The data come from the RNA Mapping Database (RMDB), library OK3TST. Structure probing data (2A3 and DMS) for a 207-nucleotide construct. For 2A3, 4,401 sequencing reads were counted. The reactions ran in a buffer of 150 mM KOAc, 10 mM MgCl2 and 150 mM bicine (pH 8.5), at 24 C.
RNA sequence: GGGAACGACUCGAGUAGAGUCGAAAACAGUCAAGUGAAUUUGAAAAACUUUGAGGUAUCAUCUGUAACAUCUCUCAUGCUCAGACUUGAACAUCUCUCAUGCUUCAGCAGAACACCCACCCCAAUGAGGCAUGCCUAUAUUCAUCCUGAACAGAUACAUAAUUACUGACUUCGGUCAGUAAUUAUGAAAAGAAACAACAACAACAAC
Reactivity to 2A3 in 0.01 (KOAc 150mM, MgCl2 10mM, bicine 150mM(pH8.5), 24C), signal-to-noise 6, nucleotides 027 to 156: c040a020g070u070c050a060a040g020u050g090a090a120u140u100u150g120a120a110a060a070a050c080u100u080u090g030a050g030g010u050a030u090c020a010u010c030u030g060u090a060a040c040a100u020c050u010c010u020c060a030u070g000c020u030c050a040g020a090c030u040u090g010a050a020c030a080u030c040u000c010u000c030a010u040g010c010u040u030c020a040g020c020a010g060a110a040c030a100c050c020c020a040c020c010c010c010a010a060u050g000a010g010g000c010a010u030g020c010c020u140a140u010a040u080u060c030a050u060c010c030u030g020a050a020c040a030g030a020u110a050
Reactivity to DMS in 0.01 (KOAc 150mM, MgCl2 10mM, bicine 150mM(pH8.5), 24C), signal-to-noise 2, nucleotides 027 to 156: c050a100g020u000c030a060a040g040u000g020a070a140u000u000u030g000a100a130a090a090a040c050u010u000u000g010a070g020g010u000a060u010c030a170u000c020u000g030u000a070a050c030a050u000c080u000c070u010c040a050u000g000c040u010c030a070g010a110c050u020u000g030a080a050c030a070u000c040u000c030u000c030a080u000g010c010u000u000c020a050g020c060a090g000a040a060c060a100c060c030c060a130c080c020c020c010a180a170u010g000a060g000g010c000a030u010g000c060c020u000a070u000a080u000u000c040a070u010c030c010u010g000a080a080c050a020g030a140u000a140